The record gives the reactivity of an RNA of 177 nucleotides to DMS and 2A3. The RNA was probed in 150 mM KOAc, 10 mM MgCl2 and 150 mM bicine (pH 8.5) at 24 C. DMS adducts were read by reverse transcription with MarathonRT.
[RMDB]
RNA sequence: GGGAACGACUCGAGUAGAGUCGAAAAUGGCGAUCCUCCGCCUCCACCCUAAUCUCUUCGCCACGGGCAAAUUUGGCCAGAGCCUGGACUCUAUACAGAAGCGGUUCUGGGUGCGUCGGGGUGGCGGAACGCAGUCAAAUUUCGAUUUGACUGCGUUAAAAGAAACAACAACAACAAC
Reactivity to DMS in 0.01 (KOAc 150mM, MgCl2 10mM, bicine 150mM(pH8.5), 24C), signal-to-noise 6, nucleotides 027 to 126: u020g000g010c030g010a110u020c050c040u000c070c020g010c010c010u000c060c060a070c040c000c020u010a100a100u030c060u010c030u010u000c020g030c030c030a080c150g000g000g010c100a040a130a080u020u010u030g010g010c000c010a040g000a040g000c010c000u020g000g010a270c030u000c040u020a100u060a120c250a040g020a060a130g020c100g010g010u000u000c020u000g000g000g020u000g000c210g010u000c030g020g000g000g030u000g000g010c040g000g000
Reactivity to 2A3 in 0.01 (KOAc 150mM, MgCl2 10mM, bicine 150mM(pH8.5), 24C), signal-to-noise 9, nucleotides 027 to 126: u100g010g000c020g010a030u060c010c030u050c050c010g010c000c010u010c030c000a060c020c000c000u040a100a120u050c050u010c040u100u080c010g020c000c020a060c060g020g020g000c060a080a130a230u260u160u140g120g040c000c010a010g000a010g010c000c010u080g050g030a140c010u000c010u050a140u070a230c120a080g070a110a010g060c040g010g000u010u000c010u010g010g010g010u070g040c020g090u090c040g010g060g000g000u020g000g000c000g000g010